[RMDB]
Structure probing data (DMS and 2A3) for a 207-nucleotide construct.
For DMS the reverse transcriptase was MarathonRT.

RNA sequence: GGGAACGACUCGAGUAGAGUCGAAAAGUAAUAGAUAACUGGCUGCAGCGUAGGCGUCAACGCAUAGCCAGUACGAAUGGUACCUGUAAAUAAAAUAUGGCGCCUAGUACAAGUACCAACAGAAGGAUAAGCGAUGGUGAUGUCAAUCACAUUUGCACCGCUUUUAUUUAUUCGUAAAUAAAAGCGGAAAAGAAACAACAACAACAAC
Reactivity to DMS in 0.01 (KOAc 150mM, MgCl2 10mM, bicine 150mM(pH8.5), 24C), signal-to-noise 2, nucleotides 027 to 156: g000u000a090a070u030a110g030a200u000a070a030c000u000g000g050c000u000g000c140a160g000c000g030u000a070g020g010c030g020u000c010a120a070c020g000c040a150u000a080g000c020c000a030g000u010a070c050g020a110a100u010g080g000u000a030c000c010u000g000u000a050a110a150u000a040a100a090a180u010a130u000g010g020c020g050c000c000u050a060g030u000a080c000a010a010g000u000a090c010c020a080a150c030a060g000a070a070g000g010a140u000a060a060g000c030g030a070u000g010g010u000g030a030u000g010u010c140a070a140u000c050a060c030a110u000u000u000g020c070a160
Reactivity to 2A3 in 0.01 (KOAc 150mM, MgCl2 10mM, bicine 150mM(pH8.5), 24C), signal-to-noise 4, nucleotides 027 to 156: g040u060a030a140u090a180g120a150u140a150a040c000u000g010g020c000u090g100c140a240g000c020g000u010a030g000g000c000g020u010c000a010a000c000g000c030a080u100a090g000c000c000a000g000u000a000c000g060a080a130u070g000g000u000a000c000c000u020g000u060a010a090a060u140a060a100a090a060u120a070u050g000g010c000g000c000c000u030a030g010u010a000c010a030a010g000u010a000c000c000a020a050c060a080g110a110a070g070g030a090u050a110a020g000c060g020a010u060g050g130u030g010a050u030g130u180c080a100a050u020c010a020c010a070u040u070u180g020c020a020
The RNA was probed in 150 mM KOAc, 10 mM MgCl2 and 150 mM bicine (pH 8.5) at 24 C.